[RMDB]
RNA sequence: GGGAACGACUCGAGUAGAGUCGAAAAUUUCACUUUCAACUCCACAAACCCAAUCACCAACUGCACAGACUGAUUGCAUGACCAAGGAGGGAAAGACUUCAGCUACUGGUUUAACAACAUUUUUGGAACUAUAACAACCUUUCGAGGUUGUUAUAGUAAAAGAAACAACAACAACAAC
Reactivity to 2A3 in 0.01 (KOAc 150mM, MgCl2 10mM, bicine 150mM(pH8.5), 24C), signal-to-noise 4, nucleotides 027 to 126: u030u040u060c030a000c050u020u100u060c050a110a110c030u030c010c020a040c050a030a120a100c020c000c030a010a040u040c010a010c030c020a050a050c050u080g000c060a030c020a100g150a130c040u050g050a110u030u090g030c040a040u060g020a020c020c020a070a030g060g010a040g050g040g040a070a060a010g040a040c020u040u050c070a010g050c020u070a050c030u080g030g070u100u070u110a070a030c050a050a010c020a080u090u120u030u040u070g060g020a010
Reactivity to DMS in 0.01 (KOAc 150mM, MgCl2 10mM, bicine 150mM(pH8.5), 24C), signal-to-noise 6, nucleotides 027 to 126: u020u010u010c080a150c080u000u020u000c050a070a080c050u010c030c030a090c130a070a130a130c060c050c010a100a090u010c060a070c060c050a050a100c080u010g020c050a050c080a090g010a070c100u000g000a070u000u010g000c060a050u000g010a070c080c070a060a080g000g010a070g000g000g010a050a060a090g010a080c070u000u010c050a040g000c040u000a060c070u000g000g000u000u000u000a080a070c080a050a050c110a080u000u000u010u010u000g010g010a230